[RMDB]
RNA sequence: GGGAACGACUCGAGUAGAGUCGAAAACAACGUCGGAGGAAUUUCAGUCGGAACAACAAACUCAGCCACGCCACAAUCCUCUGAAUGGAGAAUUGUCGAUGAACUACGUCUAGGACCACUGCCAUGAAUAUCAUCUUCAACCAGCGAAUCGAGAUCAACGUGGAGGUUGUUUCGACAACCUCCACGUAAAAGAAACAACAACAACAAC
Reactivity to 2A3 in 0.01 (KOAc 150mM, MgCl2 10mM, bicine 150mM(pH8.5), 24C), signal-to-noise 1, nucleotides 027 to 156: c110a020a020c000g000u080c110g010g030a010g000g080a180a180u040u130u200c060a080g030u040c090g000g000a040a000c030a010a010c000a000a180a080c040u050c060a050g100c060c010a010c000g020c040c000a010c000a030a030u060c000c030u050c070u070g190a110a070u190g030g010a010g000a020a030u020u030g040u040c030g030a040u050g070a120a040c080u060a020c210g000u000c020u050a080g030g000a080c010c030a100c210u140g020c010c010a000u070g010a020a030u100a060u020c020a000u010c000u070u010c030a050a120c110c060a030g000c000g040a030a020u020c010g000a000g020a210u050c060a010